RNA sequence: GGGAACGACUCGAGUAGAGUCGAAAAGAUUGGCGCAGGGGUACGGACCUCAGCUAGAUCAUGGGAGCUGAGUGCAAACUGUUGAUUUCAGUGCAGCUGGCGUGUGGCUGGCUCACUGGAAACAGGUUAAUGUCAGGAGGUUCGCCUCCUGACAUUAAAAAGAAACAACAACAACAAC
Reactivity to DMS in 0.01 (KOAc 150mM, MgCl2 10mM, bicine 150mM(pH8.5), 24C), signal-to-noise 2, nucleotides 027 to 126: g010a120u020u030g000g040c060g040c010a050g000g000g000g000u040a060c070g050g000a110c120c000u040c000a000g000c050u000a040g000a080u000c120a070u040g000g000g010a060g000c020u000g010a020g020u010g000c110a160a110a130c080u020g050u000u010g000a210u000u000u000c000a030g000u000g010c140a020g030c000u020g000g010c010g020u050g000u040g010g030c000u010g000g000c000u000c000a000c000u000g020g020a020a040a090c020a030g010g000u000
Reactivity to 2A3 in 0.01 (KOAc 150mM, MgCl2 10mM, bicine 150mM(pH8.5), 24C), signal-to-noise 4, nucleotides 027 to 126: g070a070u070u180g030g000c030g030c090a020g040g020g010g010u050a050c040g030g080a040c030c000u010c020a000g030c010u070a050g020a200u090c090a090u160g110g040g070a000g020c020u020g010a010g050u070g010c070a060a010a060c010u010g070u050u060g110a200u010u040u010c000a000g000u000g040c070a000g000c020u010g000g010c010g090u300g080u160g270g000c000u000g000g000c000u000c010a000c000u010g040g000a000a020a010c020a000g040g010u010